[RMDB]
RNA sequence: GGGAACGACUCGAGUAGAGUCGAAAACAGACGUUCGCGUCUGAAAACUCCUGACUCCAGGUCCUGUGUGUUACCUCGAAAUAGCACUGGACUUGGAGUCAGAAGGCAAAACCCCACUUCGGUGGGGGCAUUACUAAUUCUUCGGAAUUAGUAAUGCAAAAGAAACAACAACAACAAC
Reactivity to 2A3 in 0.01 (KOAc 150mM, MgCl2 10mM, bicine 150mM(pH8.5), 24C), signal-to-noise 4, nucleotides 027 to 126: c000a000g010a010c010g030u080u100c300g040c000g100u010c010u000g000a030a020a020a040c010u020c010c000u000g000a010c010u000c000c000a000g030g000u010c010c010u040g020u020g010u000g060u120u090a120c030c070u100c060g070a230a060a060u070a040g020c000a000c020u010g020g000a000c000u000u000g000g000a010g000u000c000a000g000a000a000g040g000c020a020a050a070a210c000c010c050c000a000c010u050u100c240g070g000u010g000g000g010g000
Reactivity to DMS in 0.01 (KOAc 150mM, MgCl2 10mM, bicine 150mM(pH8.5), 24C), signal-to-noise 5, nucleotides 027 to 126: c000a010g010a010c000g030u000u020c240g050c030g030u010c000u000g000a060a060a140a120c020u000c010c000u010g000a010c000u000c000c000a010g000g000u000c000c000u000g020u010g010u000g000u000u010a050c120c080u000c270g000a110a080a140u010a130g000c000a010c010u000g000g000a010c000u000u000g010g000a010g000u000c000a000g010a010a000g000g000c200a070a060a110a270c000c000c000c000a010c000u000u020c150g020g000u000g000g000g010g000

This 177-nucleotide RNA was probed chemically with 2A3 and DMS. 2A3 adducts were read by reverse transcription with SuperScript II with manganese. For DMS the reverse transcriptase was MarathonRT. Source: RMDB library RFMREP, as collected in RNAgym.